[RMDB]
RNA sequence: GGGAACGACUCGAGUAGAGUCGAAAAUGACCGAUUGUCUGGCCGCUGAGACACAUAGGGAUUGUGAUUUUAAUAAACCACUCAUUGAGUGGCCACUUACUGAGUAUGAUUUUACUGAUUAUAAGGUUAACGAAUGCGUUCGCGCAUUCGAAAAGAAACAACAACAACAAC
Reactivity to 2A3 in 0.01 (KOAc 150mM, MgCl2 10mM, bicine 150mM(pH8.5), 24C), signal-to-noise 6, nucleotides 027 to 129: u060g040a030c000c030g050a060u020u110g040u030c040u010g010g020c010c010g000c040u050g030a030g030a000c000a000c010a080u070a050g010g050g080a070u010u070g000u010g080a100u010u020u070u180a100a100u130a070a040a040c020c010a000c000u010c010a230u100u220g010a000g010u000g000g030c000c000a020c000u090u100a040c020u010g020a000g070u120a090u150g130a160u050u080u070u070a060c040u030g030a070u030u100a080u100a160a040g060g010u040u060a050a020
Reactivity to DMS in 0.01 (KOAc 150mM, MgCl2 10mM, bicine 150mM(pH8.5), 24C), signal-to-noise 5, nucleotides 027 to 129: u020g020a160c050c030g040a020u040u050g030u030c030u020g020g040c000c000g000c150u010g030a000g010a050c060a040c110a020u020a000g030g050g010a040u060u020g040u000g010a090u000u020u020u020a080a080u050a010a150a280c000c100a050c020u010c060a140u000u000g000a040g040u000g000g000c040c070a060c110u030u010a010c100u000g050a160g000u000a000u000g030a110u000u010u010u010a140c050u000g020a000u000u000a110u000a090a120g030g010u000u000a070a070